[RMDB]
RNA sequence: GGGAACGACUCGAGUAGAGUCGAAAAUCUGGAGUUAGAGAGGUGAUGGAUGAGACCACUAACUGGCUAUGGGCUUUUCUCGCACGAGAAAAGAAGCCAAGGUUGUGCACCAGGGAAGAGUUUAAAAGGAAGGUCAACAGCAACGCUGCUUUGGGAGAACCUAACCGUCCUUCGGGACGGUUAGGUUAAAAGAAACAACAACAACAAC
Reactivity to 2A3 in 0.01 (KOAc 150mM, MgCl2 10mM, bicine 150mM(pH8.5), 24C), signal-to-noise 1, nucleotides 027 to 156: u080c020u030g040g000a030g010u090u060a000g030a030g010a050g160g000u060g010a050u050g000g040a010u050g020a010g030a020c020c000a050c030u040a130a010c060u010g000g000c010u070a200u160g020g130g020c000u030u040u010u000c000u000c010g040c070a160c260g010a000g000a000a000a000a020g000a010a010g010c010c010a010a000g010g000u030u020g040u040g000c070a030c040c000a020g040g010g000a010a010g020a000g000u040u110u250a130a160a000a010g050g020a020a020g090g010u080c050a020a040c010a040g040c000a080a030c110g010c030u010g000c010u030u060u060g020g030g000a050g050

The record gives the reactivity of an RNA of 207 nucleotides to 2A3.
For 2A3, 650 sequencing reads were counted.